An RNA of 207 nucleotides, treated with DMS and 2A3 and read out base by base.
[RMDB]
RNA sequence: GGGAACGACUCGAGUAGAGUCGAAAACUACCAUGGUGGCAACGGGUGAGCACGUUGCCCUGUAGGACGCAAGACCGUCGGGCGCGUCGCGGCGGCACCGGCGACACGCUGGCUCAGAUGAGGUCUCCGGGGCCGACUCUCGGUACGCCACGGGAGCCAAGCUUCAUAACUUCGGUUAUGAAGCUUGAAAAGAAACAACAACAACAAC
Reactivity to DMS in 0.01 (KOAc 150mM, MgCl2 10mM, bicine 150mM(pH8.5), 24C), signal-to-noise 1, nucleotides 027 to 156: c000u000a200c000c040a020u000g000g050u030g030g050c040a030a010c020g030g000g010u000g030a240g030c070a000c000g050u000u000g010c010c010c010u020g010u000a070g020g020a210c080g040c180a100a100g010a080c000c030g020u000c150g020g030g010c030g060c030g030u000c080g030c090g030g000c010g000g000c000a110c020c000g000g000c100g020a120c030a070c020g020c050u000g000g030c030u010c070a130g010a160u000g040a210g050g000u000c010u000c000c000g030g000g000g010c010c000g010a140c040u000c040u000c010g040g030u000a070c040g020c010c000a040c000g000g020g000a090g000c140
Reactivity to 2A3 in 0.01 (KOAc 150mM, MgCl2 10mM, bicine 150mM(pH8.5), 24C), signal-to-noise 4, nucleotides 027 to 156: c010u070a070c020c000a140u120g060g040u080g030g020c030a070a030c010g030g020g060u130g130a020g070c040a030c050g020u030u300g020c010c000c000u000g000u030a080g030g060a050c050g010c090a110a080g060a140c020c030g150u270c080g050g000g000c010g000c000g000u040c070g000c010g000g000c000g000g000c000a010c000c000g000g010c020g000a000c010a000c020g030c010u100g270g110c070u110c170a050g040a300u100g060a130g080g040u010c000u000c000c000g010g000g010g000c000c010g110a130c000u000c000u020c040g010g030u090a060c060g000c010c000a010c000g010g000g000a040g010c040
DMS adducts were read by reverse transcription with MarathonRT.